[RMDB]
RNA sequence: GGGAACGACUCGAGUAGAGUCGAAAAGAUAUGGAUUAGGACAUGUCUCGACGAUCGGAAACGAUCGUCUUUGGAGACAACAGCCUACGGUCCUAAGUCGCACGGCCCCCUAUUCGUAGGGGGCCAACUUUGUUUACUACUUCGGUAGUAAACAAAGAAAAGAAACAACAACAACAAC
Reactivity to 2A3 in 0.01 (KOAc 150mM, MgCl2 10mM, bicine 150mM(pH8.5), 24C), signal-to-noise 2, nucleotides 027 to 126: g060a010u140a030u290g070g000a020u040u020a080g020g010a030c220a240u110g010u000c000u010c020g010a010c000g000a010u000c010g020g020a050a050a060c000g000a000u010c010g000u030c020u020u050u090g020g000a020g010a000c030a040a000c060a040g030c000c010u040a070c140g050g010u000c000c000u040a090a050g070u030c020g020c110a060c100g040g000c030c020c030c000c000u010a020u030u050c270g030u010a000g000g000g030g010g020c000c000a010a010
Reactivity to DMS in 0.01 (KOAc 150mM, MgCl2 10mM, bicine 150mM(pH8.5), 24C), signal-to-noise 6, nucleotides 027 to 126: g010a130u010a220u010g010g000a060u000u010a020g020g000a040c050a240u010g010u000c000u000c000g000a010c000g000a010u000c000g000g010a080a100a180c010g020a000u000c000g000u000c000u000u010u010g030g000a030g020a030c020a060a120c200a160g000c020c010u010a080c300g000g000u010c010c000u010a020a060g010u000c050g000c270a130c260g010g000c000c000c010c000c000u000a030u000u010c200g020u000a000g010g000g000g010g020c010c000a000a020

An RNA of 177 nucleotides, treated with 2A3 and DMS and read out base by base. High 2A3 reactivity points to a flexible backbone, as in loops and unpaired stretches. Reactivities are given for positions 27 through 126.